[RMDB]
RNA sequence: GGGAACGACUCGAGUAGAGUCGAAAACAGAUCUUCUGCAGGACCCUUGCUAUGAAGCCAGGCGGCACGGCGCAAGACUCAUCCCCUCUCUUUACGGGAACUGGUCUGACGUGCAGGCCAAGUUUGAAUGGUUUUUCACAUUCGUGUGAAAAACCAUAAAAGAAACAACAACAACAAC
Reactivity to 2A3 in 0.01 (KOAc 150mM, MgCl2 10mM, bicine 150mM(pH8.5), 24C), signal-to-noise 1, nucleotides 027 to 126: c020a010g040a130u030c050u140u050c030u110g070c020a020g050g050a300c050c000c000u030u030g010c000u110a060u280g130a040a000g000c000c020a030g040g000c070g000g000c000a000c050g030g030c030g000c110a080a000g020a000c000u020c040a080u160c030c000c000c020u070c010u000c040u060u150u170a060c080g000g000g070a070a060c120u100g000g000u000c000u000g020a010c000g000u040g010c000a000g120g000c000c000a000a040g030u040u090u120g110a100
Reactivity to DMS in 0.01 (KOAc 150mM, MgCl2 10mM, bicine 150mM(pH8.5), 24C), signal-to-noise 3, nucleotides 027 to 126: c070a080g010a150u000c060u000u000c030u000g000c050a090g000g010a150c060c040c020u000u000g000c030u000a080u010g010a120a060g030c120c150a110g030g000c030g010g010c010a000c020g010g030c080g030c110a050a030g010a040c030u010c210a180u010c030c020c010c080u000c200u010c100u020u000u010a110c270g000g010g010a030a090c170u010g020g010u000c000u000g000a090c070g010u000g000c020a050g000g010c000c010a050a070g010u000u000u000g010a110
Structure probing data (2A3 and DMS) for a 177-nucleotide construct. The reactions ran in a buffer of 150 mM KOAc, 10 mM MgCl2 and 150 mM bicine (pH 8.5), at 24 C.